[RMDB]
RNA sequence: GGGAACGACUCGAGUAGAGUCGAAAACAACGGUUAUCUUGCCACUGCAUUGUUAACACUCCAACAAAUAGAGUUGAAGUUUAAUCCACCUGCUCUACAAAGGGCUGGUGAAGCUGCUAACUUUUGUAAAACUCCGUCUUCGGACGGAGUAAAAGAAACAACAACAACAAC
Reactivity to 2A3 in 0.01 (KOAc 150mM, MgCl2 10mM, bicine 150mM(pH8.5), 24C), signal-to-noise 3, nucleotides 027 to 129: c000a000a020c010g020g020u030u020a060u060c060u030u100g060c010c030a080c050u050g010c040a030u080u090g030u020u090a070a050c000a010c030u000c000c000a000a010c020a040a240a120u240a090g120a010g040u000u010g030a010a000g000u020u050u180a060a020u060c030c020a000c020c000u030g020c020u000c000u040a190c110a060a250a060g010g000g000c000u000g020g000u010g000a000a000g000c000u040g000c010u040a010a010c000u020u010u030u040g060u040a040a050a010
Reactivity to DMS in 0.01 (KOAc 150mM, MgCl2 10mM, bicine 150mM(pH8.5), 24C), signal-to-noise 2, nucleotides 027 to 129: c070a050a040c090g000g060u050u000a050u010c140u000u000g000c050c080a230c160u040g050c090a250u020u020g030u050u020a190a100c040a050c030u050c050c030a030a030c080a050a130a000u130a010g000a110g020u020u030g090a000a000g030u000u000u000a060a130u010c040c040a070c000c010u080g030c000u020c000u060a070c300a080a130a070g020g010g080c000u010g010g070u020g020a050a050g000c100u010g040c040u110a020a050c000u020u030u000u000g030u000a030a070a080
Overview
Chemical mapping of a 170-nucleotide RNA with 2A3 and DMS.